[RMDB]
RNA sequence: GGGAACGACUCGAGUAGAGUCGAAAAUGAUAUGGAAUCCACCGAGCUCUAGCAGUGCCAGACGGAGCUCGGAAACGAGCUCCGUCGGUAAACUGCAUAGAGCGUUUGACGUGGAUUCCUAAGUCUGCGAUAUUCUUUUGUUCGCAAAAGAAUAUCGAAAAGAAACAACAACAACAAC
Reactivity to DMS in 0.01 (KOAc 150mM, MgCl2 10mM, bicine 150mM(pH8.5), 24C), signal-to-noise 2, nucleotides 027 to 126: u000g000a040u010a300u020g000g010a040a000u000c000c000a020c000c050g000a120g000c000u000c000u010a020g020c010a010g050u000g020c010c000a060g050a030c020g050g000a040g050c010u000c030g020g010a010a050a300c020g000a040g030c000u010c020c000g060u000c000g010g020u000a090a110a130c010u000g010c010a090u000a020g010a010g010c000g000u000u000u020g010a180c300g010u000g010g020a010u010u000c000c000u000a040a100g000u000c010u000g020
This 177-nucleotide RNA was probed chemically with DMS. The DMS profile rests on 1,545 reads. Reactivities are given for positions 27 through 126. For DMS the reverse transcriptase was MarathonRT. Conditions: 150 mM KOAc, 10 mM MgCl2 and 150 mM bicine (pH 8.5), 24 C.